[RMDB]
RNA sequence: GGGAACGACUCGAGUAGAGUCGAAAAGUUUUAGAUCUGACCUGUGAGGCCACGCAAGACUCGAUUUUACGAGCGGAGUACGGGUUUCUGAAGAGAUUGUUGCCAUACAUUGACAUGGACGCACAAACGAUACGACUCGUUUCGACGAGUCGUAUCGAAAAGAAACAACAACAACAAC
Reactivity to DMS in 0.01 (KOAc 150mM, MgCl2 10mM, bicine 150mM(pH8.5), 24C), signal-to-noise 2, nucleotides 027 to 126: g030u010u000u100u010a030g000a110u040c060u010g010a150c060c080u020g000u010g010a100g040g000c030c000a100c180g000c150a070a050g000a150c070u020c020g000a140u000u030u050u030a100c050g000a110g000c020g020g000a150g000u000a000c020g010g000g010u000u030u000c020u010g020a110a040g010a130g020a110u000u010g020u000u000g010c030c050a210u000a060c070a020u000u000g000a200c100a090u030g000g000a060c030g000c010a080c060a040a120a090
Reactivity to 2A3 in 0.01 (KOAc 150mM, MgCl2 10mM, bicine 150mM(pH8.5), 24C), signal-to-noise 2, nucleotides 027 to 126: g090u070u140u130u080a120g030a120u040c110u030g090a090c020c000u000g010u050g030a020g000g000c000c010a050c090g000c000a020a240g060a280c000u000c020g060a090u060u000u090u280a210c060g000a000g000c000g030g000a010g020u000a010c050g000g000g080u000u060u080c010u030g120a140a040g030a000g000a000u000u190g090u120u080g000c000c000a000u010a010c120a090u040u270g060a050c010a050u120g000g020a000c040g000c030a020c020a070a050a000

An RNA of 177 nucleotides, treated with DMS and 2A3 and read out base by base. The reactions ran in a buffer of 150 mM KOAc, 10 mM MgCl2 and 150 mM bicine (pH 8.5), at 24 C. For 2A3 the reverse transcriptase was SuperScript II with manganese. For 2A3, 679 sequencing reads were counted. The DMS profile rests on 1,628 reads. It was measured as part of the RMDB library OK1LIB.